[RMDB]
RNA sequence: GGGAACGACUCGAGUAGAGUCGAAAACGACAGCUUUUCGAAGCUGUCGAUUGGCAAAGGCUAGGACCGGCCAGACAAAGGUCCGAUAGCAAAUCGUAACGAAGCUCGCCUGCUUCGGCAGGCGAAAGGAGUCUAAGCUAUUCGUAGCUUAGACUCCAAAAGAAACAACAACAACAAC
Reactivity to DMS in 0.01 (KOAc 150mM, MgCl2 10mM, bicine 150mM(pH8.5), 24C), signal-to-noise 2, nucleotides 027 to 126: c000g000a000c010a000g020c000u000u000u000u020c170g020a000a000g010c000u000g000u000c010g010a010u000u010g030g000c160a110a090a090g000g040c050u000a140g000g000a010c010c000g000g000c030c000a070g010a120c240a040a060a130g000g000u000c010c000g000a020u010a100g000c050a130a070a070u000c090g030u030a080a070c130g010a120a230g000c090u000c010g000c000c010u000g010c030u000u000c210g000g000c010a000g030g000c000g000a000a030a070
Reactivity to 2A3 in 0.01 (KOAc 150mM, MgCl2 10mM, bicine 150mM(pH8.5), 24C), signal-to-noise 1, nucleotides 027 to 126: c020g030a010c000a010g010c010u040u090u120u170c160g140a000a010g000c000u000g020u010c010g000a050u010u030g040g000c040a010a110a120g050g000c000u060a070g050g020a030c000c010g020g010c020c000a130g090a070c140a060a110a010g000g000u000c010c010g020a110u090a020g020c030a050a070a110u050c050g140u200a050a140c120g030a140a000g000c030u000c010g010c050c010u010g010c000u050u040c080g040g000c030a020g050g260c010g000a000a000a000
Structure probing data (DMS and 2A3) for a 177-nucleotide construct. The 2A3 profile rests on 998 reads. Conditions: 150 mM KOAc, 10 mM MgCl2 and 150 mM bicine (pH 8.5), 24 C. For 2A3 the reverse transcriptase was SuperScript II with manganese. Reactivities are given for positions 27 through 126.